[RMDB]
RNA sequence: GGGAACGACUCGAGUAGAGUCGAAAAAGCUACACUUUAAUGUACUACAUGUGACACGGCACAUUGGUGCAAGGUGCCUAACUACAGACUCAGCGGGCAUACUCAUACAGUAUAACUUGACUGUAGGCGGUGCACAUACUUUCGAGUAUGUGCACCGAAAAGAAACAACAACAACAAC
Reactivity to 2A3 in 0.01 (KOAc 150mM, MgCl2 10mM, bicine 150mM(pH8.5), 24C), signal-to-noise 4, nucleotides 027 to 126: a000g080c090u120a040c040a040c060u030u120u190a150a100u160g010u020a000c000u010a040c040a110u030g020u020g050a050c020a030c150g080g070c020a000c000a030u020u070g010g000u010g000c000a020a030g080g000u030g030c030c000u070a120a060c000u020a010c020a050g010a130c040u020c060a010g020c050g050g040g000c050a020u020a040c010u070c030a060u100a240c080a010g020u010a040u030a120a080c040u050u120g070a030c010u000g010u030a000g030g040
Reactivity to DMS in 0.01 (KOAc 150mM, MgCl2 10mM, bicine 150mM(pH8.5), 24C), signal-to-noise 1, nucleotides 027 to 126: a040g020c080u000a090c130a010c040u090u030u010a070a100u010g000u000a030c010u000a070c100a030u000g030u000g000a120c080a080c000g010g100c000a010c110a030u070u000g000g000u000g010c000a040a040g000g030u000g000c050c060u050a060a160c060u060a030c010a110g000a020c090u050c000a070g050c130g030g000g000c280a040u000a010c000u010c260a180u010a010c130a090g090u000a000u000a140a300c160u050u000g000a130c000u000g000u060a000g030g000
Background: Structure probing data (2A3 and DMS) for a 177-nucleotide construct. Conditions: 150 mM KOAc, 10 mM MgCl2 and 150 mM bicine (pH 8.5), 24 C. For DMS the reverse transcriptase was MarathonRT. High DMS reactivity at an A or C suggests that its Watson-Crick edge is free. For DMS, 1,496 sequencing reads were counted.